[RMDB]
RNA sequence: GGGAACGACUCGAGUAGAGUCGAAAACUCCUGAACUUGUGUUUCGCUGGGUCAAGUAGGCUCUGCACUGGCUAAACAGGUCAACACACAGUCUAUCAGAGAGGGGUAAGUUCUAAGGAGAAAAAUAAAGACAGUUCUGAUAGAGGAGGCCUCACUGCAGAAAGAUGCAUUUCGAUGCAUCUUUCUGAAAAGAAACAACAACAACAAC
Reactivity to 2A3 in 0.01 (KOAc 150mM, MgCl2 10mM, bicine 150mM(pH8.5), 24C), signal-to-noise 3, nucleotides 027 to 156: c010u010c000c010u010g020a030a040c010u030u050g010u020g040u080u120u130c060g020c030u050g020g030g000u050c040a090a160g060u120a090g110g010c010u020c040u110g020c020a030c020u010g030g000c040u080a100a140a080c040a070g060g000u030c040a040a060c020a020c010a000c010a090g050u000c010u040a030u030c010a000g020a010g040a020g050g030g010g040u050a050a030g020u060u040c030u130a070a050g070g040a020g170a030a100a030a030a030u170a020a110a020g050a020c020a030g010u060u040c000u010g010a010u030a010g050a010g030g000a000g020g010c010c010u020c010a030c030u070g000
Reactivity to DMS in 0.01 (KOAc 150mM, MgCl2 10mM, bicine 150mM(pH8.5), 24C), signal-to-noise 1, nucleotides 027 to 156: c050u020c000c010u000g020a040a070c030u000u010g020u010g010u000u010u010c050g070c040u000g020g020g090u010c030a040a130g020u000a160g010g000c000u000c020u000g000c050a230c010u000g010g030c000u020a100a110a140c070a080g020g040u000c010a080a090c070a070c030a160c110a100g010u010c020u000a050u000c020a000g000a070g010a070g030g000g010g030u000a050a090g000u010u010c020u010a100a120g020g020a160g020a040a090a040a020a130u000a060a040a050g000a040c030a040g060u000u000c020u000g030a030u000a060g000a120g020g010a050g020g000c020c040u000c030a110c090u020g010
Structure probing data (2A3 and DMS) for a 207-nucleotide construct. DMS adducts were read by reverse transcription with MarathonRT. In probing experiments dimethyl sulfate is read out at A N1 and C N3, which are open when not base-paired. The reactions ran in a buffer of 150 mM KOAc, 10 mM MgCl2 and 150 mM bicine (pH 8.5), at 24 C.